[RMDB]
RNA sequence: GGGAACGACUCGAGUAGAGUCGAAAACAGCCCUCUCGCUCAGAGCACGGCGCCUCCCCCACAGUUCUCCGAUUCCAGUUUUCCCGUAAAGGAAUGUCCUUGGUGGCCGCUCAGGUGUUCGGUUCUUCAGCAUAGAAUUGUUCGCAAUUCUAUGCUGAAAAGAAACAACAACAACAAC
Reactivity to 2A3 in 0.01 (KOAc 150mM, MgCl2 10mM, bicine 150mM(pH8.5), 24C), signal-to-noise 1, nucleotides 027 to 126: c020a040g020c010c010c000u020c010u010c030g040c000u050c060a030g010a010g050c040a020c030g010g020c000g000c030c000u040c000c020c000c010c000a040c010a050g040u050u000c020u000c020c010g030a080u090u000c030c000a020g010u010u030u090u000c010c000c020g050u130a090a040a030g040g030a100a080u090g070u030c000c000u050u070g090g010u020g050g000c000c020g010c010u030c030a020g000g050u040g020u040u070c030g020g020u010u020c000u020u020
Reactivity to DMS in 0.01 (KOAc 150mM, MgCl2 10mM, bicine 150mM(pH8.5), 24C), signal-to-noise 1, nucleotides 027 to 126: c140a130g000c030c020c030u020c070u010c060g010c000u050c070a110g020a080g000c080a080c090g000g030c050g010c050c030u030c000c020c000c020c010a190c080a070g010u000u000c000u010c020c050g000a080u030u000c020c020a100g000u000u000u000u000c000c000c000g000u070a060a060a010g000g030a090a120u010g000u010c030c000u000u000g010g030u010g020g000c000c030g000c050u000c110a110g000g050u040g000u010u010c040g000g020u000u000c000u000u000